[RMDB]
RNA sequence: GGGAACGACUCGAGUAGAGUCGAAAAAUUUUAGGGUCUACUACUGGAGGACUAGUCUUAAGACAGUGGGACAAAAGUUCUUGUGAUUUUCACCCCUUAAUCAAUAUGCGCAUGUUGACUACCCAUGUGUAAGGCAGUCAAGAGAAGCAGAGAAGAACCCAUUUUAGCAGUUCGCUGCUAAAAUGGGAAAAGAAACAACAACAACAAC
Reactivity to 2A3 in 0.01 (KOAc 150mM, MgCl2 10mM, bicine 150mM(pH8.5), 24C), signal-to-noise 1, nucleotides 027 to 156: a000u140u170u230u170a040g040g020g000u000c000u010a040c040u040a030c090u090g060g050a030g050g000a030c030u010a010g030u000c050u160u110a150a060g080a050c000a070g070u000g030g000g000a020c110a000a160a000a000g010u000u010c000u160u180g050u050g090a170u120u000u050u160c010a030c000c000c000c000u050u130a100a090u090c050a010a010u130a030u210g000c030g000c030a000u130g030u080u090g070a000c000u110a070c000c000c000a050u050g010u000g030u090a060a040g000g000c030a010g040u030c050a040a000g040a000g000a070a030g020c000a000g030a040g030a200a000g000a010a000

Source information: Source: RMDB library OK3TST, as collected in RNAgym. The record gives the reactivity of an RNA of 207 nucleotides to 2A3. The 2A3 profile rests on 352 reads. Conditions: 150 mM KOAc, 10 mM MgCl2 and 150 mM bicine (pH 8.5), 24 C. Values cover nucleotides 27 to 156.